The data come from the RNA Mapping Database (RMDB), library OK1LIB.
Structure probing data (2A3) for a 177-nucleotide construct.

[RMDB]
RNA sequence: GGGAACGACUCGAGUAGAGUCGAAAAGCAGAGUAACCUGAAACGAUUUGGCAUCGAUUGUAUAUCAUCCUGACGUACACGAUGGACACACGUGGGAGUUGAUUAGAUUUCAGAGUACUCUCGACCGCGCCGUCAGAUCCUUCGGGAUCUGACGGCGAAAAGAAACAACAACAACAAC
Reactivity to 2A3 in 0.01 (KOAc 150mM, MgCl2 10mM, bicine 150mM(pH8.5), 24C), signal-to-noise 1, nucleotides 027 to 126: g130c060a000g000a040g010u000a140a020c000c000u010g000a000a000a030c000g000a000u000u000u220g000g000c060a000u030c000g290a180u040u150g000u000a190u100a000u130c150a090u160c000c150u070g150a040c060g000u070a090c090a000c000g000a040u070g120g000a060c030a000c000a000c240g240u220g000g150g000a100g000u030u010g090a070u000u090a180g030a090u010u010u010c000a000g010a000g000u000a000c000u070c000u000c000g000a010c000c010g000

Notes
The RNA was probed in 150 mM KOAc, 10 mM MgCl2 and 150 mM bicine (pH 8.5) at 24 C.